The data come from the RNA Mapping Database (RMDB), library OK1LIB.
An RNA of 177 nucleotides, treated with 2A3 and DMS and read out base by base.
The DMS profile rests on 6,422 reads.
For DMS the reverse transcriptase was MarathonRT.

RNA sequence: GGGAACGACUCGAGUAGAGUCGAAAAAGGUCUGGCAUGCUGUAAGAAGUGGAUUGUCUUGGGAGAUCAGGAGCAGUUGCAUGCCUUGAAGACGACCGGGACACCUGAUUGCUCCUGGCGGUAGACACCCGUAAUCAUCAUUCGUGAUGAUUACGGGAAAAGAAACAACAACAACAAC
Reactivity to 2A3 in 0.01 (KOAc 150mM, MgCl2 10mM, bicine 150mM(pH8.5), 24C), signal-to-noise 5, nucleotides 027 to 126: a000g030g000u000c010u000g000g000c000a020u020g000c050u070g060u300a110a030g080a180a060g140u100g100g080a170u110u100g040u040c010u090u100g040g060g040a190g030a220u070c010a000g000g020a030g020c000a020g010u070u090g040c000a000u020g000c010c000u020u080g030a020a030g070a010c080g000a010c000c030g000g030g010a030c040a050c060c020u050g040a130u050u040g010c000u000c020c000u000g000g010c000g070g010u030a020g020a010c010a040
Reactivity to DMS in 0.01 (KOAc 150mM, MgCl2 10mM, bicine 150mM(pH8.5), 24C), signal-to-noise 1, nucleotides 027 to 126: a120g010g000u000c000u020g030g020c000a000u000g000c020u000g000u040a080a080g030a080a220g000u000g000g000a110u010u010g030u000c030u010u010g010g000g000a160g000a190u000c000a000g000g000a010g020c010a030g000u030u030g000c020a010u000g020c000c000u010u020g010a090a090g010a110c120g000a040c000c010g000g010g020a150c080a100c070c020u000g000a050u000u000g000c000u000c010c000u000g000g010c070g000g010u000a010g000a030c150a230